[RMDB]
RNA sequence: GGGAACGACUCGAGUAGAGUCGAAAAGAUAUGGAUCGCCACCCAGCGAAGAACUCGGAAACGAGGGAGCUGGUGGACCGAUCCUAAGUCAAACAAGCAAAGAUCUCUUCGGAGAUCUUUGCUUGAACACAUUCAAUCUCUUCGGAGAUUGAAUGUGAAAAGAAACAACAACAACAAC
Reactivity to 2A3 in 0.01 (KOAc 150mM, MgCl2 10mM, bicine 150mM(pH8.5), 24C), signal-to-noise 2, nucleotides 027 to 126: g020a000u080a050u170g010g000a000u000c020g020c010c000a020c090c150c040a000g010c010g190a300a070g000a030a040c000u000c020g020g050a040a070a080c000g000a020g000g020g010a010g000c000u020g000g040u020g040g010a020c170c050g010a000u010c000c000u020a130a010g050u020c030a080a040a150c000a010a010g000c000a020a000a020g000a010u000c000u000c000u090u270c300g050g000a040g000a000u000c000u000u010u000g000c000u010u000g000a000a000
Reactivity to DMS in 0.01 (KOAc 150mM, MgCl2 10mM, bicine 150mM(pH8.5), 24C), signal-to-noise 3, nucleotides 027 to 126: g020a060u000a300u000g010g000a000u000c000g010c030c010a030c090c040c050a000g020c010g000a080a100g000a090a190c000u000c000g000g000a090a150a230c010g010a010g000g000g020a110g000c000u010g010g020u000g000g000a060c160c020g000a010u000c000c000u000a010a090g010u000c050a090a110a280c020a000a000g000c010a000a010a010g000a010u000c000u000c000u010u010c200g030g000a010g010a010u000c000u000u000u000g000c000u000u000g000a060a210